[RMDB]
RNA sequence: GGGAACGACUCGAGUAGAGUCGAAAACAAUCUGACGCCCAGUGACAAGAAUGACUGUGAAUGUGUUGCAUCUCGUCAGAUAUAGAUGUCCGAUGUCUCAUUCACAGUCACAGAUCAGACAUCGGAGGAUAGUUGACUAUUUCGAUAGUUAGCUAUCAAAAGAAACAACAACAACAAC
Reactivity to 2A3 in 0.01 (KOAc 150mM, MgCl2 10mM, bicine 150mM(pH8.5), 24C), signal-to-noise 9, nucleotides 027 to 126: c020a010a080u030c030u050g010a010c020g050c010c020c020a050g060u070g080a050c050a090a070g140a140a200u200g010a030c000u010g000u010g020a020a020u030g040u030g060u170u140g020c020a050u030c050u030c050g040u020c030a000g080a030u100a020u070a110g130a060u120g060u070c040c030g000a000u000g010u000c000u000c030a020u010u010c000a000c000a000g000u010c000a000c000a000g030a070u110c010a000g020a030c010a030u030c020g030g010a030g080
Reactivity to DMS in 0.01 (KOAc 150mM, MgCl2 10mM, bicine 150mM(pH8.5), 24C), signal-to-noise 9, nucleotides 027 to 126: c100a100a060u010c030u000g000a040c040g010c090c040c030a120g000u010g010a070c110a090a130g010a130a130u030g000a020c020u000g000u010g000a010a020u010g010u030g010u000u000g000c080a110u030c070u010c030g000u000c020a040g010a070u020a070u040a080g010a070u020g010u010c030c030g000a010u000g000u000c000u010c050a030u000u000c000a000c000a000g010u000c010a020c140a070g010a090u020c130a040g000a010c030a010u000c000g000g010a080g020